[RMDB]
RNA sequence: GGGAACGACUCGAGUAGAGUCGAAAAGGGGUCUAUUGGACUACCGAAGAACAGCUAGACAUGAGCUGAAGCCUCCACGGCUCAACAGCUAGCUGGGAGGUAGUACAAUAGACGGAGGCACCCAAAAGAGCACAAGCUGUUCGCAGCUUGUGCUCAAUCUGUGUUAUAGGUUCGCCUAUAACACAGAAAAAGAAACAACAACAACAAC
Reactivity to DMS in 0.01 (KOAc 150mM, MgCl2 10mM, bicine 150mM(pH8.5), 24C), signal-to-noise 1, nucleotides 027 to 156: g000g000g040g040u010c010u000a000u010u000g010g000a000c010u010a010c000c000g000a180a250g030a200a270c040a010g030c010u010a030g000a100c060a300u010g020a060g000c030u020g000a060a160g030c000c000u010c020c020a300c010g020g000c000u000c000a100a120c070a170g000c010u000a020g010c000u000g030g000g000a060g050g030u000a010g000u000a010c000a000a010u010a000g010a060c050g000g010a040g070g040c010a120c010c000c010a080a030a090a150g030a030g000c000a010c010a010a020g000c000u010g050u000u010c300g040c060a010g030c000u000u120g030u030g020c000u010c010a000a040
Reactivity to 2A3 in 0.01 (KOAc 150mM, MgCl2 10mM, bicine 150mM(pH8.5), 24C), signal-to-noise 3, nucleotides 027 to 156: g030g000g020g000u000c000u000a000u010u000g000g000a000c000u010a000c020c000g070a140a000g010a020a000c000a000g010c000u000a010g040a040c040a300u250g010a020g000c010u010g020a070a010g020c000c000u000c000c000a040c030g030g000c000u010c020a080a240c050a100g140c010u000a000g010c000u000g000g010g000a010g000g000u000a000g000u000a010c000a010a000u000a000g000a000c000g000g000a000g000g000c000a030c000c000c000a040a090a010a070g000a000g000c000a000c000a010a000g000c010u020g020u130u160c250g040c130a000g020c000u000u000g000u000g000c000u000c000a000a010
Structure probing data (DMS and 2A3) for a 207-nucleotide construct. 2A3 adducts were read by reverse transcription with SuperScript II with manganese. The data come from the RNA Mapping Database (RMDB), library RNAMAK. The DMS profile rests on 1,817 reads. The RNA was probed in 150 mM KOAc, 10 mM MgCl2 and 150 mM bicine (pH 8.5) at 24 C.